[RMDB]
RNA sequence: GGGAACGACUCGAGUAGAGUCGAAAAUGAGUACUUUCGGAAAAGGUACCGAACGUUUAAUAAUGUAGUUAAUACUAGUAGUGCUCCUGCAAGCGAUUACUGUUGUUUAACGGUACCCGCUUUGGCACCGUACGAUCGUAUUCGUACGAUCGUACGGAAAAGAAACAACAACAACAAC
Reactivity to 2A3 in 0.01 (KOAc 150mM, MgCl2 10mM, bicine 150mM(pH8.5), 24C), signal-to-noise 1, nucleotides 027 to 126: u090g010a000g050u010a000c000u020u040u130c090g100g050a000a070a030a160g080g000u070a050c020c000g000a030a070c010g000u060u070u060a150a070u110a030a060u130g080u180a050g010u000u150a080a020u020a270c060u000a030g020u040a030g040u060g030c010u040c040c010u020g010c010a010a010g030c010g000a030u020u000a020c000u010g050u100u030g090u040u300u220a000a000c000g000g000u010a000c010c010c000g000c000u110u030u030g060g000c080a050
Reactivity to DMS in 0.01 (KOAc 150mM, MgCl2 10mM, bicine 150mM(pH8.5), 24C), signal-to-noise 2, nucleotides 027 to 126: u000g010a120g090u010a020c010u000u000u020c060g030g020a170a080a100a040g010g020u000a020c000c010g010a120a100c120g010u000u000u000a070a070u000a080a090u020g010u010a040g000u010u000a080a080u010a050c030u020a090g000u000a050g020u010g010c090u000c030c100u000g010c080a050a020g000c020g020a060u000u000a010c020u000g020u000u000g020u000u000u000a000a010c000g000g010u000a030c050c030c020g000c080u000u000u000g020g000c080a150
Record summary:
The data come from the RNA Mapping Database (RMDB), library OK2TST. This 177-nucleotide RNA was probed chemically with 2A3 and DMS. The DMS profile rests on 1,585 reads. For 2A3 the reverse transcriptase was SuperScript II with manganese.